[RMDB]
RNA sequence: GGGAACGACUCGAGUAGAGUCGAAAAAUGAACUUCGGUUCAUGUUACUUCCUAAGUCACCCUCGCGCAUUGCCGAGCUACCCACCCAUGUCGGAAACGACAUGGAGGUAUCAAUGCGAAACGGGUGAUAUGGACUUUCCACAACUUCGGUUGUGAACCCUCUUUAAGUAUUCGUACUUAAAGAGGGAAAAGAAACAACAACAACAAC
Reactivity to DMS in 0.01 (KOAc 150mM, MgCl2 10mM, bicine 150mM(pH8.5), 24C), signal-to-noise 2, nucleotides 027 to 156: a030u000g020a000a010c000u010u010c170g080g010u000u030c000a000u000g010u000u000a110c180u010u000c010c000u010a110a300g010u000c010a030c000c010c010u010c100g000c040g000c000a040u000u010g020c300c080g050a170g040c130u000a040c040c010c050a200c270c000c000a010u000g000u010c000g050g000a210a110a240c000g020a020c010a030u000g000g010a070g000g000u000a040u000c010a020a010u000g000c020g020a020a080a020c220g020g020g020u000g010a040u000a050u010g000g000a120c130u000u010u000c010c010a010c000a020a010c010u000u000c260g070g010u000u010g020u000g000a020a080
Reactivity to 2A3 in 0.01 (KOAc 150mM, MgCl2 10mM, bicine 150mM(pH8.5), 24C), signal-to-noise 4, nucleotides 027 to 156: a000u010g000a010a000c030u070u070c300g150g000u000u000c000a000u010g050u050u040a150c050u140u040c000c000u040a200a030g000u000c000a010c000c010c010u050c070g090c000g030c070a000u000u040g090c150c110g130a100g130c080u060a010c010c000c020a150c040c000c000a000u010g000u020c000g000g080a120a050a070c000g010a000c000a000u000g020g000a000g000g000u000a010u120c000a000a010u010g000c000g020a030a090a110c130g000g000g010u000g000a000u010a010u010g030g020a020c030u110u130u040c110c020a030c020a060a030c020u100u120c220g160g000u030u020g000u020g070a100a140
Annotation
Structure probing data (DMS and 2A3) for a 207-nucleotide construct. As a SHAPE reagent, 2A3 marks flexible, mostly unpaired nucleotides at the ribose 2'-OH. The data come from the RNA Mapping Database (RMDB), library RNAMAK.